[RMDB]
RNA sequence: GGGAACGACUCGAGUAGAGUCGAAAAGCGCUCUGGUCGACGGGCUUCAUCGUCGCGCGCGCGAUCAAGCCAUAUGCCGACCCGAACCUGUAUCUGCUCGCGCGCUUCUGCGGCACCGCGCUGCUCACGGCACUAAUGGAUUCGUCCAUUAGUGCCGAAAAGAAACAACAACAACAAC
Reactivity to DMS in 0.01 (KOAc 150mM, MgCl2 10mM, bicine 150mM(pH8.5), 24C), signal-to-noise 2, nucleotides 027 to 126: g000c120g000c050u010c030u000g020g000u010c020g000a020c030g030g010g000c010u000u000c260a000u000c000g010u000c110g010c030g000c050g020c070g000c000g040a030u000c220a010a010g000c000c000a140u020a060u010g040c050c010g000a010c000c010c060g000a000a040c060c020u010g030u020a120u010c080u010g000c100u000c080g020c090g010c000g000c020u000u000c050u010g020c030g020g000c060a140c150c130g000c150g010c020u010g040c010u000c120a190
Reactivity to 2A3 in 0.01 (KOAc 150mM, MgCl2 10mM, bicine 150mM(pH8.5), 24C), signal-to-noise 2, nucleotides 027 to 126: g060c050g030c020u020c010u010g020g000u000c000g030a100c060g070g020g000c000u000u000c000a020u000c000g020u030c060g000c010g000c000g000c010g000c010g050a000u000c040a000a000g000c010c010a110u200a120u300g070c010c000g000a010c020c000c040g020a020a040c020c070u110g070u160a110u100c050u140g050c030u050c070g000c000g010c000g050c040u040u020c040u040g020c030g000g010c020a030c100c150g050c040g000c030u030g010c010u030c030a080